[RMDB]
The data come from the RNA Mapping Database (RMDB), library TTRINS. An RNA of 177 nucleotides, treated with DMS and read out base by base.
RNA sequence: GGGAACGACUCGAGUAGAGUCGAAAAGAUAUGGACAGAACUAGGCAUACGUCGUAUGGACAUGAUGGACUCGGAAACGAGUUGAUCAUCAACAGCCAUCGACGUAUGCCUAGUUCUGUCCUAAGUCGCAUUAUUUACCGUUCGCGGUAAAUAAUGCAAAAGAAACAACAACAACAAC
Reactivity to DMS in 0.01 (KOAc 150mM, MgCl2 10mM, bicine 150mM(pH8.5), 24C), signal-to-noise 2, nucleotides 027 to 126: g010a110u000a300u000g000g000a010c000a010g010a010a000c000u000a000g010g010c030a010u010a000c000g000u000c010g040u010a000u000g020g010a130c170a110u000g000a000u000g040g010a010c000u000c000g000g010a160a090a300c020g000a010g000u000u000g000a040u030c000a020u000c160a070a090c300a170g000c020c000a000u000c000g030a010c010g010u000a000u000g020c000c000u000a000g000u000u000c010u000g000u020c000c000u000a000a080g000u020c120